An RNA of 207 nucleotides, treated with 2A3 and read out base by base. The 2A3 profile rests on 666 reads. The data come from the RNA Mapping Database (RMDB), library OK3TST. The reactions ran in a buffer of 150 mM KOAc, 10 mM MgCl2 and 150 mM bicine (pH 8.5), at 24 C.
[RMDB]
RNA sequence: GGGAACGACUCGAGUAGAGUCGAAAAAAAGUUAGCACUUGCUGCAUGAAAUAUUGAGCAUUCAGAAGCUCAUAUCCUGAAUUCUCCAUAUUGAAUCCAUAGUCCAGGUAUAUGUCAACUCAGGAAAGAAUAUUGCCUGUCAAAACAAAUGUUCCUACUCAUACCGGUAUUUCGAUACCGGUAUGAGAAAAGAAACAACAACAACAAC
Reactivity to 2A3 in 0.01 (KOAc 150mM, MgCl2 10mM, bicine 150mM(pH8.5), 24C), signal-to-noise 2, nucleotides 027 to 156: a000a000a000g100u080u060a060g000c090a050c160u090u220g050c030u010g010c030a000u070g030a010a040a040u070a040u030u010g000a000g000c010a010u060u060c050a030g110a150a070g100c090u080c300a090u090a080u120c010c000u010g040a010a010u000u000c000u000c030c020a000u020a060u040u070g030a030a000u030c010c010a000u050a030g060u010c050c020a010g040g020u020a090u030a020u060g160u050c070a010a080c060u030c150a050g000g090a150a070a070g060a080a040u130a040u160u240g040c000c020u030g050u080c070a030a130a000a030c050a030a100a090u110g000u020u030c010c010u020a040